[RMDB]
RNA sequence: GGGAACGACUCGAGUAGAGUCGAAAAGGCGAAACCGGCUCUUGAAAAACCACCCCCCCGCCCCCAUAAUUGAAAGCAUGGUUGUAAUUCCGGCAAUCUGGAGGCGUUCUGGACAGGGGUUCGAUUCGGCUCUCAAAUAUUUCGAUAUUUGAGAGCCAAAAGAAACAACAACAACAAC
Reactivity to 2A3 in 0.01 (KOAc 150mM, MgCl2 10mM, bicine 150mM(pH8.5), 24C), signal-to-noise 1, nucleotides 027 to 126: g040g000c040g050a030a080a020c060c040g020g000c000u000c020u000u020g150a080a060a000a000a000c020c020a020c000c000c000c020c000c000c000g010c000c000c000c010c000a040u080a120a210u180u210g100a080a000a000g030c120a110u260g060g060u040u050g090u130a020a080u160u070c040c030g000g000c020a010a020u040c000u030g020g000a020g020g000c000g020u060u060c020u080g050g020a030c000a100g000g000g000g000u020u010c000g060a060u080u030c020
Reactivity to DMS in 0.01 (KOAc 150mM, MgCl2 10mM, bicine 150mM(pH8.5), 24C), signal-to-noise 1, nucleotides 027 to 126: g000g000c040g000a080a110a170c040c020g000g010c060u010c020u010u000g000a160a090a060a090a100c040c050a090c010c000c040c000c030c000c010g040c010c000c020c020c000a130u030a070a090u050u070g020a080a010a080g000c100a060u000g020g000u040u000g000u070a020a120u010u020c010c050g020g000c050a010a050u000c060u000g000g000a090g000g000c000g040u010u000c050u020g010g000a080c120a040g000g010g000g010u000u000c020g000a200u010u020c080

The record gives the reactivity of an RNA of 177 nucleotides to 2A3 and DMS. The 2A3 profile rests on 727 reads. In probing experiments dimethyl sulfate is read out at A N1 and C N3, which are open when not base-paired. The reactions ran in a buffer of 150 mM KOAc, 10 mM MgCl2 and 150 mM bicine (pH 8.5), at 24 C.